[RMDB]
RNA sequence: GGGAACGACUCGAGUAGAGUCGAAAAGAUAUGGACACAGAGCGCAAAUACCCUUCACGGGAGAACCUAGUCGGAAACGACUGCGUUCGACGAUCGUGAGGGUAUUUGCGCUCUGUGUCCUAAGUCACUUCCUUAGGAAGUUCGCUUCCUAAGGAAGAAAAGAAACAACAACAACAAC
Reactivity to DMS in 0.01 (KOAc 150mM, MgCl2 10mM, bicine 150mM(pH8.5), 24C), signal-to-noise 1, nucleotides 027 to 126: g020a060u000a300u010g000g020a000c010a010c010a000g000a030g000c000g020c020a000a040a000u000a020c000c020c020u010u000c000a000c000g020g000g000a030g000a020a030c000c020u000a010g000u010c000g000g010a170a140a250c030g010a010c000u010g000c300g000u010u000c000g010a100c300g000a040u030c010g000u000g000a000g020g000g000u000a000u000u000u000g010c020g000c000u000c000u000g000u000g000u000c000c020u000a010a130g020u000c060a250